[RMDB]
RNA sequence: GGGAACGACUCGAGUAGAGUCGAAAACAUUUGCUAUAAAAUCCGGAAUAUCGAUAGCAUCCACAUAUGCGCUAAAGACAAUAACGAACUUUGUCGUCCAGAUUCCUAAGGAUGAUGCUAGAAGAAAUACUACCACUCGUUUCGACGAGUGGUAGUAAAAAGAAACAACAACAACAAC
Reactivity to DMS in 0.01 (KOAc 150mM, MgCl2 10mM, bicine 150mM(pH8.5), 24C), signal-to-noise 2, nucleotides 027 to 126: c090a110u000u010u010g000c030u020a070u000a100a090a090a060u040c040c020g020g010a150a040u000a070u010c170g000a110u000a020g010c000a040u000c080c260a180c150a110u000a100u010g000c110g020c060u010a070a050a140g000a060c050a050a010u010a030a150c120g000a070a120c130u000u000u000g020u020c010g020u000c060c030a040g000a110u000u000c030c030u000a150a020g010g000a040u020g000a020u000g010c060u000a070g000a150a080g000a030a080a070
Reactivity to 2A3 in 0.01 (KOAc 150mM, MgCl2 10mM, bicine 150mM(pH8.5), 24C), signal-to-noise 2, nucleotides 027 to 126: c010a030u110u110u090g010c020u040a010u110a180a190a080a050u040c020c020g030g090a070a100u200a030u120c020g000a000u010a010g020c010a010u010c070c000a070c030a110u270a050u270g070c030g020c090u110a100a010a050g040a010c020a030a030u100a090a070c130g140a100a010c180u000u040u060g000u010c000g040u000c000c000a010g030a150u020u030c000c000u030a070a030g030g030a030u070g010a010u040g090c050u020a030g050a140a000g020a000a090a000